This 207-nucleotide RNA was probed chemically with DMS and 2A3. For 2A3 the reverse transcriptase was SuperScript II with manganese. The DMS profile rests on 3,225 reads. Conditions: 150 mM KOAc, 10 mM MgCl2 and 150 mM bicine (pH 8.5), 24 C. Reactivities are rounded to 0.1 and cut off at 0 and 3. The data come from the RNA Mapping Database (RMDB), library ARCHII. DMS adducts were read by reverse transcription with MarathonRT.
RNA sequence: GGGAACGACUCGAGUAGAGUCGAAAACGAGCUUAUUAAGCGUGUCGGAGGGUUGGCUCCGUCAUCAACACAUUUCGGUUAAAUAUAACUGACAAAUCAAACAAUAAUUUCGCAGUAGCUGCGUAAUAGCCACUGCAUCGCCUAACAGCAUCUCCUAGUAUACUACGAAGUUCGCUUCGUAGUAUACAAAAGAAACAACAACAACAAC
Reactivity to DMS in 0.01 (KOAc 150mM, MgCl2 10mM, bicine 150mM(pH8.5), 24C), signal-to-noise 2, nucleotides 027 to 156: c040g020a170g020c000u000u010a080u010u000a060a090g030c020g040u000g000u010c020g000g010a050g020g020g010u000u010g030g020c030u000c020c030g020u010c090a040u010c300a030a090c040a050c040a260u000u000u000c050g030g030u000u000a040a070a220u000a120u000a010a040c020u000g030a120c100a070a080a070u010c070a090a140a150c050a040a140u000a060a120u000u000u010c110g010c020a040g050u000a020g000c000u010g030c140g000u000a080a070u000a030g020c010c000a040c030u000g030c010a100u010c070g000c030c020u000a070a080c110a060g000c040a150u010c030u000c010c020u000a300
Reactivity to 2A3 in 0.01 (KOAc 150mM, MgCl2 10mM, bicine 150mM(pH8.5), 24C), signal-to-noise 9, nucleotides 027 to 156: c050g000a010g000c000u030u030a020u090u080a200a000g010c020g030u040g110u120c010g000g000a000g020g030g000u250u010g020g040c000u000c010c000g170u060c010a000u000c000a000a010c010a010c010a000u040u080u070c020g010g030u040u030a080a250a100u250a190u040a130a050c000u020g030a030c060a060a110a060u170c080a110a070a110c060a050a090u170a160a120u070u210u200c090g000c000a000g010u040a030g020c040u060g020c040g090u100a060a080u100a150g000c000c000a010c000u020g000c010a020u070c020g000c000c000u020a020a010c010a010g000c000a080u020c020u000c020c000u000a010